[RMDB]
The record gives the reactivity of an RNA of 207 nucleotides to 2A3. The 2A3 profile rests on 1,246 reads. Conditions: 150 mM KOAc, 10 mM MgCl2 and 150 mM bicine (pH 8.5), 24 C. For 2A3 the reverse transcriptase was SuperScript II with manganese. Reactivities are given for positions 27 through 156. 2A3 is a SHAPE reagent: it acylates the 2'-hydroxyl of flexible nucleotides of all four kinds.
RNA sequence: GGGAACGACUCGAGUAGAGUCGAAAAGGGGUCAGCUACCCACCGAAUGGGAGCUCUUUUGACGCUCUGAAGCCUCCACGGAGCGAUAAGAGUCAUUCGAGGCUGACGGAGGCACCCAAAACGUGCGAUAAACGACUUCGGUCGUUUAUCGCACGAAGUAGUAUUCUUGCUUCGGCAAGAAUACUACAAAAGAAACAACAACAACAAC
Reactivity to 2A3 in 0.01 (KOAc 150mM, MgCl2 10mM, bicine 150mM(pH8.5), 24C), signal-to-noise 1, nucleotides 027 to 156: g090g010g060g010u020c030a030g000c020u060a130c070c030c070a020c000c030g000a000a000u010g000g040g100a210g060c020u030c030u140u290u130u060g100a020c020g000c010u010c000u020g040a070a020g010c000c000u010c000c010a010c010g010g010a030g020c020g030a040u280a300a060g020a030g180u300c000a000u030u000c000g000a000g010g000c010u030g000a000c010g000g010a000g010g000c010a040c010c000c010a010a070a000a090c030g000u000g010c000g000a000u000a000a000a010c040g010a000c040u070u090c220g060g000u060c000g000u030u000u000a000u000c010g010c000a010c000g000a000a000